This 177-nucleotide RNA was probed chemically with DMS and 2A3. It was measured as part of the RMDB library OK2TRN. For 2A3 the reverse transcriptase was SuperScript II with manganese. The RNA was probed in 150 mM KOAc, 10 mM MgCl2 and 150 mM bicine (pH 8.5) at 24 C. Reactivities are given for positions 27 through 126.

RNA sequence: GGGAACGACUCGAGUAGAGUCGAAAAAAACGAUAAUAUAAAGGAUUUGCUAGACUGGUAUAGUAGUGGGUCUGACACUUUUACAAAUAGUGAAGUUUUAGAUAAUUCCUUAGGAUCUAUGCGUAUAAAUACGAUCUUAGUUCGCUAAGAUCGUAUUAAAAGAAACAACAACAACAAC
Reactivity to DMS in 0.01 (KOAc 150mM, MgCl2 10mM, bicine 150mM(pH8.5), 24C), signal-to-noise 5, nucleotides 027 to 126: a050a060a060c030g000a120u010a070a080u010a140u020a090a060a100g010g000a060u000u000u000g010c030u000a040g010a050c040u000g010g020u010a060u000a080g020u010a050g020u000g010g010g010u000c050u010g010a080c050a020c020u010u010u000u000a040c060a090a120a100u010a100g010u000g000a070a060g000u000u000u010u000a030g010a060u010a050a090u010u000c010c010u000u010a070g010g010a040u000c080u010a020u010g010c090g010u000a070u010a070
Reactivity to 2A3 in 0.01 (KOAc 150mM, MgCl2 10mM, bicine 150mM(pH8.5), 24C), signal-to-noise 3, nucleotides 027 to 126: a000a000a000c130g050a150u210a290a050u120a060u090a130a100a040g030g010a060u110u010u190g000c020u030a040g020a150c060u070g120g000u200a130u070a270g130u010a020g030u040g060g040g040u010c000u010g020a000c010a030c030u080u100u110u220a050c050a050a250a160u120a130g030u050g050a090a020g000u030u010u020u040a020g010a010u050a020a060u080u100c000c000u020u060a050g030g030a040u010c010u040a030u190g060c070g080u130a060u150a270